[RMDB]
RNA sequence: GGGAACGACUCGAGUAGAGUCGAAAAUUUAAAAGCUCUCCAAAAGACCUCACUUGGCCUGAUGUUACUUAGUAUCAUGCCUCAGUUUCCUUAUCUGUAAAAAGUGGUGGUAAUCCCAAGUGUAGCAACUUCCUUAGGAGUUCGCUCCUAAGGAAGUAAAAGAAACAACAACAACAAC
Reactivity to DMS in 0.01 (KOAc 150mM, MgCl2 10mM, bicine 150mM(pH8.5), 24C), signal-to-noise 2, nucleotides 027 to 126: u000u010u010a110a080a070a180g010c030u000c010u000c040c070a090a090a120a110g000a060c050c010u000c030a030c020u000u000g010g010c040c030u000g000a060u000g000u020u000a110c190u000u000a110g030u000a030u010c020a030u000g000c010c010u000c030a030g010u000u000u000c040c070u000u000a100u000c020u010g000u030a090a060a120a050a050g030u000g020g050u010g010g010u010a040a070u010c030c010c020a030a150g020u000g020u020a060g010c110a150
Reactivity to 2A3 in 0.01 (KOAc 150mM, MgCl2 10mM, bicine 150mM(pH8.5), 24C), signal-to-noise 1, nucleotides 027 to 126: u000u000u020a030a100a020a000g010c010u000c040u000c040c040a000a110a020a070g060a070c000c000u030c010a020c000u040u060g000g000c020c030u010g020a010u020g050u050u050a160c050u080u080a070g040u020a040u030c030a010u020g000c000c000u020c010a030g010u070u080u080c050c020u120u150a090u170c010u030g060u060a040a070a040a040a000g030u030g050g090u030g000g000u000a090a030u010c010c000c020a020a090g050u030g060u070a010g050c000a030